[RMDB]
RNA sequence: GGGAACGACUCGAGUAGAGUCGAAAAUUUCAGCGUAUGAGGCUAUUAAUUCCACUAAUAAUUGGUUCGUCUGAGUCAAUAGUGCCAGGUAGUCAACGCCAUAGGUAAUAACGGCAUAUUUAUCCUGGCAAGUCUGAAGAUUCGUCUUCAGACUUGCAAAAGAAACAACAACAACAAC
Reactivity to 2A3 in 0.01 (KOAc 150mM, MgCl2 10mM, bicine 150mM(pH8.5), 24C), signal-to-noise 1, nucleotides 027 to 126: u030u030u020c000a070g000c000g010u080a070u130g160a130g070g000c070u030a020u100u170a080a110u070u050c100c000a060c010u070a110a290u110a090a030u050u070g040g010u000u090c040g130u100c260u240g000a040g000u000c000a000a020u030a160g040u050g000c000c010a040g010g070u040a010g020u000c040a040a020c000g000c030c030a020u070a150g010g140u170a140a000u020a170a000c050g030g000c020a000u000a020u090u020u060a000u040c010c000u040g000
Reactivity to DMS in 0.01 (KOAc 150mM, MgCl2 10mM, bicine 150mM(pH8.5), 24C), signal-to-noise 1, nucleotides 027 to 126: u000u020u010c060a070g030c120g040u000a070u000g010a140g010g000c040u000a040u000u000a060a120u010u030c020c000a110c100u020a090a080u020a150a070u010u000g000g020u000u000c030g000u000c190u000g020a070g000u000c050a010a030u000a050g020u010g020c000c020a060g000g030u000a020g010u000c040a080a090c130g010c020c050a100u010a030g000g020u000a070a070u030a080a110c140g000g010c030a030u010a070u010u000u010a080u010c010c000u000g000